[RMDB]
RNA sequence: GGGAACGACUCGAGUAGAGUCGAAAAAAGCCAGGAAACGGCUCCAGCUGCUGCCUAUGGAUAGCAGCCACAGUGGCUCCUUUACUUUUGUAAUUUGCUUUAUUGUUACCAACCAUUAGGCGCCAGAUCUUUUCUAAUUCUUCGGAAUUAGAAAAGAAAAAGAAACAACAACAACAAC
Reactivity to 2A3 in 0.01 (KOAc 150mM, MgCl2 10mM, bicine 150mM(pH8.5), 24C), signal-to-noise 1, nucleotides 027 to 126: a000a000g040c070c000a080g130g070a160a110a030c100g010g000c030u010c040c020a040g020c010u000g000c000u030g000c000c010u120a130u150g060g000a070u030a030g000c020a020g020c000c000a030c000a010g160u050g000g000c000u000c000c000u090u100u100a070c010u000u160u110u190g070u050a020a120u110u050u120g040c050u160u170u170a090u270u240g040u050u040a040c020c000a040a000c000c000a040u000u100a020g030g000c040g000c030c000a000g010a070
Reactivity to DMS in 0.01 (KOAc 150mM, MgCl2 10mM, bicine 150mM(pH8.5), 24C), signal-to-noise 3, nucleotides 027 to 126: a090a090g000c030c070a060g010g030a080a090a120c110g010g030c010u010c090c050a160g000c020u000g010c000u010g000c020c030u010a110u010g020g000a110u000a030g040c040a030g000c010c180a050c230a070g020u000g010g050c020u000c050c020u000u000u000a060c080u010u010u000u000g010u000a010a040u010u010u010g020c120u000u010u000a060u000u000g010u010u000a050c060c060a080a160c120c030a110u000u000a050g010g010c060g020c110c050a050g000a080